[RMDB]
This 177-nucleotide RNA was probed chemically with 2A3 and DMS. Conditions: 150 mM KOAc, 10 mM MgCl2 and 150 mM bicine (pH 8.5), 24 C. The DMS profile rests on 603 reads. Source: RMDB library 15KREP, as collected in RNAgym. The 2A3 profile rests on 805 reads.
RNA sequence: GGGAACGACUCGAGUAGAGUCGAAAAGCCGAAGGGUUGAGACGCACCCACAGACGGGAGCCUCCAGGAGGGUUUGAGGAGAACUCACCUCCAGAGGACCCCUUCAGCGAACAGAGGAGUCUCUACCGUUCUUAUAACUCUUCGGAGUUAUAAGAACAAAAGAAACAACAACAACAAC
Reactivity to 2A3 in 0.01 (KOAc 150mM, MgCl2 10mM, bicine 150mM(pH8.5), 24C), signal-to-noise 1, nucleotides 027 to 126: g020c000c010g030a110a060g250g030g010u030u070g000a000g000a020c000g020c070a080c010c040c020a040c000a020g040a010c010g010g000g000a040g010c010c000u040c070c050a150g060g010a020g100g000g000u090u180u300g060a010g010g060a210g080a220a070c010u000c000a020c020c010u000c000c000a000g000a000g000g000a000c000c000c000c000u020u030c030a030g030c030g060a080a040c010a080g040a100g080g000a030g030u000c000u000c010u050a020c010c010
Reactivity to DMS in 0.01 (KOAc 150mM, MgCl2 10mM, bicine 150mM(pH8.5), 24C), signal-to-noise 1, nucleotides 027 to 126: g010c000c010g030a080a090g000g020g020u000u050g020a050g020a030c000g000c090a110c060c000c020a150c120a130g010a080c120g000g000g020a090g020c000c030u000c020c050a150g010g000a010g000g000g020u010u050u010g010a020g010g000a300g010a110a130c000u000c000a130c020c000u000c010c010a240g000a030g000g000a040c010c000c000c000u000u000c000a070g010c070g000a060a040c200a090g020a130g000g020a300g000u000c010u000c000u010a020c070c020
2A3 adducts were read by reverse transcription with SuperScript II with manganese. DMS adducts were read by reverse transcription with MarathonRT.